[RMDB]
RNA sequence: GGGAACGACUCGAGUAGAGUCGAAAAGGUGAGCUGGACGGGAAGUAGCUCCAGCGACUGCAUCCGAAGCUUUGAUAAGAGCAACUCCAUCUACGUUGCUCAAGUAGGUGGUAGCAGCAAACACCGACCCUCGACGUAGCUUCGGCUACGUCGAGGGAAAAGAAACAACAACAACAAC
Reactivity to DMS in 0.01 (KOAc 150mM, MgCl2 10mM, bicine 150mM(pH8.5), 24C), signal-to-noise 1, nucleotides 027 to 126: g000g080u000g000a000g000c000u050g000g000a020c020g030g000g030a090a160g000u030a210g060c030u090c000c100a070g000c000g000a030c000u000g000c020a080u000c040c000g000a300a300g020c050u000u050u020g000a200u100a280a210g000a000g000c000a020a000c060u000c090c280a220u070c100u020a000c270g000u000u020g030c100u000c030a000a050g000u000a020g000g040u000g000g030u000a160g060c000a020g000c020a070a140a300c070a040c000c000g000a120
Reactivity to 2A3 in 0.01 (KOAc 150mM, MgCl2 10mM, bicine 150mM(pH8.5), 24C), signal-to-noise 2, nucleotides 027 to 126: g010g040u010g000a000g020c000u000g010g040a020c050g110g000g090a220a190g050u290a090g020c170u000c000c000a000g000c000g000a050c000u010g000c000a040u000c040c050g000a010a000g000c030u010u010u090g160a120u160a210a100g000a020g000c030a000a000c000u160c070c000a080u100c040u060a050c100g150u010u070g070c020u010c030a000a000g000u000a000g030g150u130g000g070u160a030g000c000a000g000c000a000a050a010c000a050c000c000g000a110